[RMDB]
RNA sequence: GGGAACGACUCGAGUAGAGUCGAAAAAGAGUUAAACGACACGGAAGCGGACUUCCAGGCGUGGUCCCCGAUGCUCGAAAUCUAUCGAUUGUUGCUCUAUCACGCCGAGCAGGGAGAUAUGCAGACAUGCGAUUUAAAAUUUCGAUUUUAAAUCGCAAAAAGAAACAACAACAACAAC
Reactivity to DMS in 0.01 (KOAc 150mM, MgCl2 10mM, bicine 150mM(pH8.5), 24C), signal-to-noise 6, nucleotides 027 to 126: a080g010a090g010u000u010a060a120a150c110g010a070c090a050c130g010g000a150a100g010c060g000g020a180c040u000u000c020c040a120g010g010c020g020u000g000g000u000c050c040c040c070g000a060u000g000c110u000c020g020a030a080a070u000c130u000a090u010c050g010a060u010u000g010u000u000g010c030u010c050u000a080u010c030a050c030g010c010c030g010a100g030c140a090g000g010g010a040g010a060u010a150u020g000c060a090g010a140c180a090
Reactivity to 2A3 in 0.01 (KOAc 150mM, MgCl2 10mM, bicine 150mM(pH8.5), 24C), signal-to-noise 2, nucleotides 027 to 126: a000g070a050g030u110u140a140a300a020c040g080a040c030a010c120g060g030a100a040g030c010g030g090a010c010u000u000c010c000a010g020g000c000g000u020g000g010u020c010c000c000c010g050a050u060g030c030u020c010g010a040a060a110u100c080u180a120u090c060g040a060u020u120g060u040u060g010c000u000c020u060a080u050c000a000c000g040c000c000g010a050g020c070a040g040g090g000a040g010a020u160a000u200g100c000a000g000a070c020a080